[RMDB]
RNA sequence: GGGAACGACUCGAGUAGAGUCGAAAACCAGGGACCUUGACCUAGCACGGACUUGGUCGCCACGCUUAGCUCCCCCUGACCUGCUUUUGAACCCGCUAAUCCACCCCAACUCUUGCCCCGACGUUCAGUCUCGAAUUGUAUUCGUACAAUUCGAGACAAAAGAAACAACAACAACAAC
Reactivity to 2A3 in 0.01 (KOAc 150mM, MgCl2 10mM, bicine 150mM(pH8.5), 24C), signal-to-noise 5, nucleotides 027 to 126: c000c000a010g020g020g000a010c010c020u020u050g060a080c010c010u060a060g070c070a050c240g040g040a050c030u020u030g030g010u020c000g020c000c000a070c050g050c030u090u160a050g010c000u050c020c000c000c000c000u000g010a050c030c010u030g030c020u100u050u050u080g030a040a040c010c000c000g010c050u060a060a030u020c010c010a020c010c000c020c000a010a060c030u010c010u040u050g010c010c000c000c020g040a030c020g030u050u130c060a020
Reactivity to DMS in 0.01 (KOAc 150mM, MgCl2 10mM, bicine 150mM(pH8.5), 24C), signal-to-noise 4, nucleotides 027 to 126: c000c000a200g000g010g000a050c000c020u000u000g000a040c040c020u020a130g030c180a140c150g010g010a110c040u000u020g010g020u010c030g030c040c010a080c130g010c070u000u010a100g020c040u000c030c030c010c040c030u000g010a090c050c020u000g020c040u030u010u020u000g010a060a090c040c010c040g010c070u010a070a110u000c040c030a110c040c000c000c040a060a060c040u010c040u000u000g000c030c000c010c030g000a090c130g000u000u010c100a120